RNA sequence: GGGAACGACUCGAGUAGAGUCGAAAAAGACAUACGUUCGCGUAUGUCUGACGGGCACCUGACCCUAUGGAAAUGCUCUAUGACAGGACACACUGAUUGUGAUACCUCGAGAUUUCGAUCUCGAGAAUAUACUGUUCAUGUUCGCAUGAACAGUAUAAAAAGAAACAACAACAACAAC
Reactivity to 2A3 in 0.01 (KOAc 150mM, MgCl2 10mM, bicine 150mM(pH8.5), 24C), signal-to-noise 9, nucleotides 027 to 126: a010g000a000c000a000u010a000c000g030u020u080c250g000c000g100u010a000u000g000u000c000u010g010a020c020g010g020g000c040a050c030c030u050g130a190c010c000c020u060a100u130g060g050a040a100a060u110g020c010u000c020u060a110u130g110a050c020a030g020g060a060c010a000c000a000c060u100g160a300u210u070g040u020g040a080u100a130c000c000u000c010g010a010g000a010u050u100u200c210g060a020u010c000u010c000g000a000g000a000a000
Reactivity to DMS in 0.01 (KOAc 150mM, MgCl2 10mM, bicine 150mM(pH8.5), 24C), signal-to-noise 9, nucleotides 027 to 126: a020g010a010c000a010u000a000c000g020u010u010c210g030c010g020u000a000u000g010u000c000u000g000a090c160g000g000g020c030a060c050c030u000g010a180c020c020c030u000a170u010g010g000a070a080a100u000g010c050u000c020u000a060u010g010a140c080a040g010g000a140c070a040c040a060c090u000g000a110u010u010g010u000g010a160u010a100c180c000u000c000g010a020g000a020u000u000u010c170g010a020u000c000u000c000g000a010g000a060a070
Source: RMDB library M2PK50, as collected in RNAgym. Structure probing data (2A3 and DMS) for a 177-nucleotide construct. For DMS, 21,206 sequencing reads were counted. Conditions: 150 mM KOAc, 10 mM MgCl2 and 150 mM bicine (pH 8.5), 24 C.